[RMDB]
RNA sequence: GGGAACGACUCGAGUAGAGUCGAAAAUCAACGUUUUUCAACUUAUGAAAUGCUUGGUUUUCAUUAAAAAUGAUAUGGUUUCCUACCACAAAUCCCUGUCAAGAUGAUGCUUGACAGGGAUUUUUUUCAGUCUCUUUAAUUUCGAUUAAAGAGACUGAAAAGAAACAACAACAACAAC
Reactivity to 2A3 in 0.01 (KOAc 150mM, MgCl2 10mM, bicine 150mM(pH8.5), 24C), signal-to-noise 1, nucleotides 027 to 126: u000c010a010a000c100g010u040u000u010u020u010c070a090a080c050u170u200a140u270g010a000a000a000u040g010c000u000u000g010g010u010u050u030u000c050a020u090u300a070a090a070a060a010u150g050a040u060a080u160g030g070u000u000u060c020c000u010a070c030c010a080c030a110a080a000u010c000c030c000u000g020u000c010a000a000g010a060u250g100a070u220g250c020u000u000g000a000c000a010g000g000g010a000u010u010u010u010u010u010u010